[RMDB]
RNA sequence: GGGAACGACUCGAGUAGAGUCGAAAAAGCCACCGCUACGGCGAUGGCAAGUAGAAAAGUUGGUGCUUAGACCACGCCCUCUACCGUAAUAAUAGAUAAAUAGGCGAGUAUCAGUACGCUGAUACAAAAAACACUCACACGUUCGCGUGUGAGUGAACUAUCGGGAUGGGUUCGCCCAUCCCGAUAGAAAAGAAACAACAACAACAAC
Reactivity to 2A3 in 0.01 (KOAc 150mM, MgCl2 10mM, bicine 150mM(pH8.5), 24C), signal-to-noise 1, nucleotides 027 to 156: a020g010c000c000a000c000c000g000c020u000a020c230g140g020c000g010a000u000g000g000c030a000a020g070u050a010g010a000a000a000a000g060u110u060g060g000u100g030c230u190u100a060g040a130c000c030a030c050g010c000c000c000u000c000u000a030c060c040g130u050a160a000u050a150a080u070a300g110a060u100a070a090a050u080a050g050g000c070g020a020g070u000a000u040c010a010g050u020a070c260g020c110u000g010a020u000a000c000a010a300a000a000a000a000c000a000c000u010c000a000c000a000c000g020u070u040c140g010c000g070u000g000u000g000a000g000u000g000a000a010